[RMDB]
RNA sequence: GGGAACGACUCGAGUAGAGUCGAAAAGCUCAGGAACCCCCGGUUGAGCGAACUCAUGUGACGUAGGGCGCUAUCACUUGAGGAUUAGCAGCGAGACGUUCGAGAAGACUUACGUCGAGCUGCGAAAGGGUUGCUUGUCGUUCGCGACGAGCAACCCAAAAGAAACAACAACAACAAC
Reactivity to DMS in 0.01 (KOAc 150mM, MgCl2 10mM, bicine 150mM(pH8.5), 24C), signal-to-noise 1, nucleotides 027 to 126: g040c000u000c040a090g000g000a190a210c020c030c010c090c010g000g000u000u000g000a000g000c060g020a080a160c000u000c010a050u000g000u010g000a030c150g000u000a170g000g000g000c080g000c010u040a210u000c060a020c040u040u010g000a030g000g000a020u000u000a110g000c010a010g000c000g000a300g000a000c000g000u000u010c100g030a300g010a160a090g010a080c070u000u000a000c030g030u000c000g010a180g030c050u000g020c000g010a000a040a040
Reactivity to 2A3 in 0.01 (KOAc 150mM, MgCl2 10mM, bicine 150mM(pH8.5), 24C), signal-to-noise 2, nucleotides 027 to 126: g000c000u000c000a000g070g070a130a140c010c000c000c000c000g140g000u080u160g010a010g010c010g000a030a010c000u000c010a000u020g040u000g020a000c090g010u100a120g100g120g000c050g000c090u120a050u050c000a030c000u030u040g050a040g020g100a100u170u120a020g000c000a000g000c010g020a040g000a050c010g040u050u080c050g050a010g120a300a130g200a060c050u110u070a000c000g010u000c000g020a010g000c000u000g000c000g000a010a000a000